[RMDB]
RNA sequence: GGGAACGACUCGAGUAGAGUCGAAAAUUGUACACCUUCGGGUGUACAAGCUGUCUAGUCGCUAGCAAACGAUCAAAGGUAGCGACUAGACUUUAUUGAUCGCGACGUGCGCUUUCGAGCGCACGAAGCUCUGGCUAAUGUUCGCAUUAGCCAGAGCAAAAGAAACAACAACAACAAC
Reactivity to 2A3 in 0.01 (KOAc 150mM, MgCl2 10mM, bicine 150mM(pH8.5), 24C), signal-to-noise 2, nucleotides 027 to 126: u010u000g000u000a000c000a000c000c000u000u040c260g100g010g000u000g000u000a010c000a000a010g000c000u050g010u010c000u000a000g000u000c010g010c040u030a020g190c070a120a120a080c060g140a160u180c100a150a050a060g200g040u010a000g010c000g000a000c000u000a000g010a000c000u000u040u010a030u000u050g090a040u100c070g000c060g130a100c010g030u000g010c020g040c020u080u060u060c240g080a020g000c000g000c000a000c010g000a000a000
Reactivity to DMS in 0.01 (KOAc 150mM, MgCl2 10mM, bicine 150mM(pH8.5), 24C), signal-to-noise 2, nucleotides 027 to 126: u010u010g000u000a000c000a000c010c000u010u010c230g010g020g010u010g030u020a000c000a000a010g020c110u010g000u000c000u000a020g000u000c010g010c000u000a020g040c060a070a110a160c090g000a060u010c090a080a100a110g000g020u000a010g000c000g020a010c000u000a000g010a000c000u000u010u000a060u000u000g000a010u000c070g000c130g030a180c000g020u000g000c000g000c010u010u000u010c180g010a000g020c000g000c000a000c010g000a030a110
This 177-nucleotide RNA was probed chemically with 2A3 and DMS. The reactions ran in a buffer of 150 mM KOAc, 10 mM MgCl2 and 150 mM bicine (pH 8.5), at 24 C. It was measured as part of the RMDB library M2PK50. For DMS the reverse transcriptase was MarathonRT. 2A3 adducts were read by reverse transcription with SuperScript II with manganese. For DMS, 2,329 sequencing reads were counted.